[RMDB]
RNA sequence: GGGAACGACUCGAGUAGAGUCGAAAACGGAGAUUGUUCGCAAUCUCCGAAAUACAAAGACCGAAGCUUAUGGCGAUGUCACUUCCCUUGGGCGCAAAACAAAAACCGCCGGCUUCGGCCGGCGGAACAUGAGAGAAAAGUUCGCUUUUCUCUCAUGAAAAGAAACAACAACAACAAC
Reactivity to DMS in 0.01 (KOAc 150mM, MgCl2 10mM, bicine 150mM(pH8.5), 24C), signal-to-noise 1, nucleotides 027 to 126: c020g020g000a000g010a000u000u010g020u000u000c230g020c000a010a000u000c000u000c000c010g010a000a030a050u000a070c100a060a100a200g000a010c020c030g030a070a130g000c040u000u000a010u010g010g020c050g000a110u000g000u010c070a060c050u000u000c010c000c010u010u000g030g000g000c060g020c060a080a040a030a040c090a020a090a040a140a120c010c000g000c110c010g080g030c020u000u000c180g040g000c020c000g020g000c000g000g030a030a030
Reactivity to 2A3 in 0.01 (KOAc 150mM, MgCl2 10mM, bicine 150mM(pH8.5), 24C), signal-to-noise 1, nucleotides 027 to 126: c000g020g000a000g000a000u010u010g030u060u150c200g050c080a030a000u020c000u000c000c000g000a000a000a010u100a000c040a030a120a020g060a030c040c000g070a050a030g080c020u120u050a080u280g070g050c020g080a030u140g070u080c000a010c070u010u000c010c020c000u040u040g050g070g010c000g020c060a040a150a140a000c050a010a110a070a220a240c020c010g000c060c050g110g000c020u010u030c100g090g020c020c050g010g030c000g000g020a020a000
About this RNA:
The data come from the RNA Mapping Database (RMDB), library M2PK50. An RNA of 177 nucleotides, treated with DMS and 2A3 and read out base by base. For 2A3, 751 sequencing reads were counted. DMS adducts were read by reverse transcription with MarathonRT. The DMS profile rests on 1,014 reads. The reactions ran in a buffer of 150 mM KOAc, 10 mM MgCl2 and 150 mM bicine (pH 8.5), at 24 C.